[RMDB]
RNA sequence: GGGAACGACUCGAGUAGAGUCGAAAACCCGCUUGCGAUAACGCUAUCACUGCGUUGGCCCGGUCCCUUCGGCUUCGGAUUCCUCAGCCCCCAGCCCCCCGAAGCAGUCGGGAUCGGGCCUGUACGCUCUACGAACAAAAUUCGUUUUGUUCGUAGAAAAAGAAACAACAACAACAAC
Reactivity to DMS in 0.01 (KOAc 150mM, MgCl2 10mM, bicine 150mM(pH8.5), 24C), signal-to-noise 7, nucleotides 027 to 126: c000c000c000g020c190u020u020g020c020g010a170u020a060a060c050g020c010u000a090u020c150a130c190u000g010c000g010u000u010g000g010c000c010c000g020g010u000c000c000c000u000u000c000g000g010c000u000u000c000g010g000a280u010u010c060c040u000c110a120g020c060c010c010c010c040a130g000c020c020c040c070c010c010g000a010a020g010c010a010g010u000c110g000g000g000a010u000c010g000g010g000c000c000u000g010u010a030c020g010c010
Reactivity to 2A3 in 0.01 (KOAc 150mM, MgCl2 10mM, bicine 150mM(pH8.5), 24C), signal-to-noise 2, nucleotides 027 to 126: c000c000c000g020c060u050u130g040c050g130a150u100a240a050c020g000c030u050a060u300c070a060c160u140g000c010g010u000u020g000g000c000c000c000g000g000u010c000c000c000u000u010c000g030g000c010u000u000c000g000g050a090u100u070c040c020u110c100a070g030c000c010c000c000c020a010g020c000c010c000c000c000c010g000a000a000g000c000a000g000u000c000g000g000g000a000u000c000g000g000g000c000c000u010g000u000a000c000g000c000
About this RNA:
The record gives the reactivity of an RNA of 177 nucleotides to DMS and 2A3. High DMS reactivity at an A or C suggests that its Watson-Crick edge is free. DMS adducts were read by reverse transcription with MarathonRT. Source: RMDB libraries RFM100 and RFMREP, as collected in RNAgym. Reactivities are given for positions 27 through 126. The RNA was probed in 150 mM KOAc, 10 mM MgCl2 and 150 mM bicine (pH 8.5) at 24 C.